[RMDB]
RNA sequence: GGGAACGACUCGAGUAGAGUCGAAAACAUGACUUUCAUGCAAUAGGAUCUAGCAAUUCACUCCUAGGGACCCCCAUGGUUAUCAGAGAACUUGUUGUGGAAUUGUAAUCCUUUAACGGACCCAGGACAAGGGUAAUAGCUUCGGCUAUUACCCUUGAAAAGAAACAACAACAACAAC
Reactivity to DMS in 0.01 (KOAc 150mM, MgCl2 10mM, bicine 150mM(pH8.5), 24C), signal-to-noise 3, nucleotides 027 to 126: c030a040u010g020a140c200u000u010u010c010a020u000g010c090a090a090u010a030g000g000a040u000c120u020a180g010c000a020a050u000u010c020a050c030u000c050c000u010a050g020g000g010a230c100c040c040c030c050a070u010g020g000u000u000a090u010c080a100g010a100g010a100a250c050u000u000g010u000u000g020u000g010g020a050a040u000u000g000u010a040a050u010c030c000u000u000u000a070a160c210g000g000a180c000c020c020a080g010g010a160
An RNA of 177 nucleotides, treated with DMS and read out base by base. The reactions ran in a buffer of 150 mM KOAc, 10 mM MgCl2 and 150 mM bicine (pH 8.5), at 24 C. Values are in units of 0.01, from 0 to 300, in steps of 10. It was measured as part of the RMDB library OK2TST. DMS adducts were read by reverse transcription with MarathonRT.